[RMDB]
RNA sequence: GGGAACGACUCGAGUAGAGUCGAAAACCGAAUUUCGAUUCGGAAGAUUCCUAAGUCCUUAACGAGGAUCGUAUAGAGUUCAUCGAUCAAUCGGAAACGAUUGGGAGAACGAUUGUACGGGAGUUAAGGAUAUGGAUUUAAGUGCCUUCGGGCACAAUCAAUUAGCGUGCUUCGGCACGCUAAUUGAAAAAGAAACAACAACAACAAC
Reactivity to DMS in 0.01 (KOAc 150mM, MgCl2 10mM, bicine 150mM(pH8.5), 24C), signal-to-noise 2, nucleotides 027 to 156: c000c050g000a000a010u000u000u010c160g030a080u000u000c030g000g000a060a040g000a080u010u000c000c010u000a070a250g030u000c000c010u010u000a010a040c010g000a180g010g000a080u010c000g000u000a010u000a070g020a300g010u010u000c020a180u020c070g020a200u000c000a000a000u010c010g000g010a110a180a230c000g020a040u000u000g000g000g030a190g010a010a010c010g000a150u010u010g020u000a010c000g020g000g030a070g010u000u010a030a020g020g010a020u000a060u000g000g000a080u000u000u000a080a180g020u010g010c000c020u020u000c300g050g050g050c020a000c000a030a270
Reactivity to 2A3 in 0.01 (KOAc 150mM, MgCl2 10mM, bicine 150mM(pH8.5), 24C), signal-to-noise 3, nucleotides 027 to 156: c020c000g000a020a030u140u130u210c300g110a050u020u000c010g030g020a120a030g070a220u120u090c010c000u010a070a050g000u000c000c000u010u000a000a000c000g040a190g160g010a020u010c000g020u010a040u050a030g100a020g020u020u020c050a240u210c240g090a070u070c010a000a000u000c000g020g040a090a080a060c020g000a010u000u000g010g010g000a030g000a000a010c020g080a180u080u180g010u000a000c000g020g000g000a020g000u010u000a000a020g020g000a000u020a020u020g020g000a000u020u150u200a170a030g000u000g000c000c000u000u080c200g070g000g000c000a000c010a010a040